[RMDB]
This 177-nucleotide RNA was probed chemically with DMS and 2A3. For DMS, 1,755 sequencing reads were counted.
RNA sequence: GGGAACGACUCGAGUAGAGUCGAAAAAGGAAGGGCGUUUUAAAAGUUGGAUUUAACGAUGAUAUGUUGCGAUGCUAAGUAAUUAAUAUAUCAUCAUAUCUACAAUGUUCUAGCUUCUUAAAAUAUAGUAUCCUUGAGUCUUCGGACUCAAGGAUACAAAAGAAACAACAACAACAAC
Reactivity to DMS in 0.01 (KOAc 150mM, MgCl2 10mM, bicine 150mM(pH8.5), 24C), signal-to-noise 1, nucleotides 027 to 126: a040g010g000a030a000g000g000g000c040g030u000u000u060u040a000a000a050a030g010u000u050g000g000a040u000u060u080a070a120c280g010a010u000g020a000u000a000u050g000u000u010g040c280g010a000u010g030c120u040a100a130g000u030a030a020u000u000a050a040u000a050u000a020u000c000a000u000c010a060u000a020u000c040u000a110c130a070a080u020g040u000u000c050u010a080g020c040u000u000c130u000u000a020a020a060a010u000a120u020a170
Reactivity to 2A3 in 0.01 (KOAc 150mM, MgCl2 10mM, bicine 150mM(pH8.5), 24C), signal-to-noise 3, nucleotides 027 to 126: a000g100g000a020a030g080g050g030c040g020u030u040u040u100a070a090a000a020g030u040u010g070g020a040u000u090u160a150a040c110g000a000u000g000a000u000a000u020g010u010u020g040c130g050a060u060g070c090u060a090a020g070u030a230a110u000u090a040a020u030a000u000a000u020c010a010u000c010a010u000a000u090c010u000a050c010a130a080u100g090u020u050c040u020a060g020c020u030u010c000u020u050a120a080a150a050u260a000u050a060